[RMDB]
Chemical mapping of a 177-nucleotide RNA with 2A3 and DMS. DMS adducts were read by reverse transcription with MarathonRT. Source: RMDB library RFMREP, as collected in RNAgym.

RNA sequence: GGGAACGACUCGAGUAGAGUCGAAAAUGCGUUCAGGCUCUCGAUACGCCGGGAUAACCUGGCGUCAGACCUGCCGGAACUUAGCAGGGAAUCGUUACGGAUCUGCUGUAUAGCCGGAUCCACACGAGCCCUAAUAGAUCUUCGGAUCUAUUAGGGCAAAAGAAACAACAACAACAAC
Reactivity to 2A3 in 0.01 (KOAc 150mM, MgCl2 10mM, bicine 150mM(pH8.5), 24C), signal-to-noise 1, nucleotides 027 to 126: u060g000c060g030u020u080c010a040g060g020c040u000c000u000c050g000a020u020a170c010g000c000c000g000g000g070a130u090a300a270c000c020u030g000g000c010g000u000c000a010g000a030c000c040u020g020c000c000g030g000a050a030c030u140u160a090g000c010a010g010g010g040a040a130u030c020g030u040u090a020c110g010g000a000u000c000u010g030c000u020g140u180a190u210a060g090c160c020g020g000a000u000c000c000a010c000a000c040g020a020
Reactivity to DMS in 0.01 (KOAc 150mM, MgCl2 10mM, bicine 150mM(pH8.5), 24C), signal-to-noise 2, nucleotides 027 to 126: u000g010c040g000u000u000c010a040g030g000c020u000c090u000c050g000a200u000a020c070g010c020c010g050g030g010a300u010a100a190c000c010u010g000g000c000g000u000c180a060g000a070c140c030u020g000c000c020g010g030a020a090c040u050u010a150g020c040a020g030g000g000a090a200u000c000g010u000u000a250c290g000g000a040u000c000u000g030c000u010g000u010a090u000a050g010c030c100g040g010a010u000c000c000a050c220a020c030g000a050

The DMS profile rests on 1,007 reads. For 2A3, 1,268 sequencing reads were counted. Conditions: 150 mM KOAc, 10 mM MgCl2 and 150 mM bicine (pH 8.5), 24 C.